[RMDB]
Notes:
Source: RMDB library OK1LIB, as collected in RNAgym. Structure probing data (2A3 and DMS) for a 177-nucleotide construct.

RNA sequence: GGGAACGACUCGAGUAGAGUCGAAAAUUAUAUCGAGGCUUGGCAAAUGUCAGACCGGCAUUACCUGUAAGUGAUGAAUAUUUAGCUGUACAAGAUGCUAUGUUAAGUGAUUUGAAUCAUCAACAUGCCCUCAUUCUCCAUUCGUGGAGAAUGAGGGAAAAGAAACAACAACAACAAC
Reactivity to 2A3 in 0.01 (KOAc 150mM, MgCl2 10mM, bicine 150mM(pH8.5), 24C), signal-to-noise 2, nucleotides 027 to 126: u080u020a060u010a160u240c100g020a040g040g000c050u040u050g030g040c060a010a180a080u090g060u010c000a010g000a100c000c000g000g030c000a000u000u140a020c000c030u100g030u140a090a020g070u000g090a050u010g010a150a040u070a100u030u050u070a050g030c070u020g130u160a030c030a050a030g060a130u150g000c000u020a010u090g010u000u060a090a120g020u010g100a050u070u170u190g060a060a040u010c000a000u030c000a020a140c000a020u110g010
Reactivity to DMS in 0.01 (KOAc 150mM, MgCl2 10mM, bicine 150mM(pH8.5), 24C), signal-to-noise 2, nucleotides 027 to 126: u010u010a060u000a130u000c060g000a020g000g000c070u000u010g030g010c130a020a040a060u030g000u010c000a030g000a140c170c010g000g040c010a040u000u000a040c070c070u000g000u010a040a070g000u000g000a020u000g000a140a070u010a110u020u000u000a010g010c010u000g000u070a020c110a280a100g000a130u000g000c010u000a040u010g010u000u010a000a020g020u040g000a050u020u000u090g010a110a160u000c030a010u040c100a120a050c230a110u030g000